RNA sequence: GGGAACGACUCGAGUAGAGUCGAAAAGGGAUUUCGACCUCAAAUCCGCGCUGCACUACAUGGUGAAUGCAGCGACCCAGGGCGGUGUCGGACUUGACGGUUUCCUGGAGCGGCCGGGAAUCGCCGCGGGCUUUAGCCCUUUCGAGGGCUAAAGCCCAAAAGAAACAACAACAACAAC
Reactivity to 2A3 in 0.01 (KOAc 150mM, MgCl2 10mM, bicine 150mM(pH8.5), 24C), signal-to-noise 2, nucleotides 027 to 126: g010g010g000a090u050u080u200c140g010a110c000c000u000c020a030a040a010u050c010c000g000c000g010c010u000g020c000a010c060u220a070c090a220u200g070g000u120g190a050a130u080g030c020a070g010c100g000a020c000c000c020a060g000g030g030c030g020g010u080g020u110c000g010g050a100c000u030u090g020a070c030g080g040u030u010u020c020c000u000g040g000a090g040c030g040g000c010c030g000g000g150a070a050u150c070g000c000c020g100c170